[RMDB]
Chemical mapping of a 177-nucleotide RNA with 2A3 and DMS. Conditions: 150 mM KOAc, 10 mM MgCl2 and 150 mM bicine (pH 8.5), 24 C. Values cover nucleotides 27 to 126.

RNA sequence: GGGAACGACUCGAGUAGAGUCGAAAAGAUAUGGAUCCUGUGGAUCUGAUGACCUGGCUCGGAAACGAGCCAGCAAGGAUACACACAUGGAUCCUAAGUCAAAGAGAAUUACUUCGGUAAUUCUCAACAAUGCUAAGCUGUUCGCAGCUUAGCAUUGAAAAGAAACAACAACAACAAC
Reactivity to 2A3 in 0.01 (KOAc 150mM, MgCl2 10mM, bicine 150mM(pH8.5), 24C), signal-to-noise 4, nucleotides 027 to 126: g030a020u070a040u180g000g010a000u000c000c010u010g000u020g010g050a070u080c080u190g190a300u140g020a060c010c000u010g020g000c000u010c010g000g000a030a100a080c030g020a030g000c020c000a010g010c000a020a030g030g030a060u170a250c120a010c000a000c040a300u300g000g000a010u010c000c000u010a100a020g030u000c080a120a160a080g010a000g010a000a000u010u020a010c020u050u090c300g020g010u000a000a000u010u000c000u000c000a000a000
Reactivity to DMS in 0.01 (KOAc 150mM, MgCl2 10mM, bicine 150mM(pH8.5), 24C), signal-to-noise 5, nucleotides 027 to 126: g000a040u000a300u010g000g010a010u000c000c010u000g000u010g000g000a070u000c020u000g020a100u030g010a110c300c000u000g000g020c000u000c000g010g000a090a110a170c000g000a020g010c010c010a010g010c010a060a070g000g020a020u000a080c080a140c020a060c140a030u020g020g010a010u000c000c000u000a020a090g020u000c030a100a120a160g000a030g000a030a000u000u000a000c000u000u010c260g020g010u000a000a010u000u000c000u010c000a070a100